[RMDB]
RNA sequence: GGGAACGACUCGAGUAGAGUCGAAAAGGAAAACAGUUCGCUGUUUUCCAAAUAAAUGGUAUGAUGUGCACGGCUAGCAGAUAGAACCAGAAAGAGCCGAAAAAAGCUUUCCCUUCGGGGAAAGCAAGAUUAUACGCUAGUUCGCUAGCGUAUAAUCAAAAGAAACAACAACAACAAC
Reactivity to DMS in 0.01 (KOAc 150mM, MgCl2 10mM, bicine 150mM(pH8.5), 24C), signal-to-noise 2, nucleotides 027 to 126: g000g000a010a000a000a000c000a000g010u000u010c200g020c000u010g010u000u000u000u000c000c010a050a080a050u020a040a050a090u010g010g020u010a050u010g010a090u000g010u000g010c060a090c050g010g020c030u000a110g020c030a030g010a090u010a100g000a140a140c010c010a060g010a070a060a070g010a060g020c040c020g030a000a040a030a060a060a110g000c000u000u000u000c000c000c000u000u010c180g040g010g000g000a000a000a000g010c010a010a020
Reactivity to 2A3 in 0.01 (KOAc 150mM, MgCl2 10mM, bicine 150mM(pH8.5), 24C), signal-to-noise 1, nucleotides 027 to 126: g000g010a000a010a000a010c000a000g010u050u080c130g050c130u000g030u010u010u000u000c010c000a020a020a010u060a010a040a030u110g100g010u150a060u220g100a040u040g050u030g080c050a040c140g040g020c020u030a030g000c030a010g000a020u050a040g110a070a040c020c000a020g050a030a060a000g100a030g000c010c010g110a070a000a010a000a000a000g000c000u000u010u000c000c000c010u000u040c210g070g010g000g000a000a000a000g000c010a000a000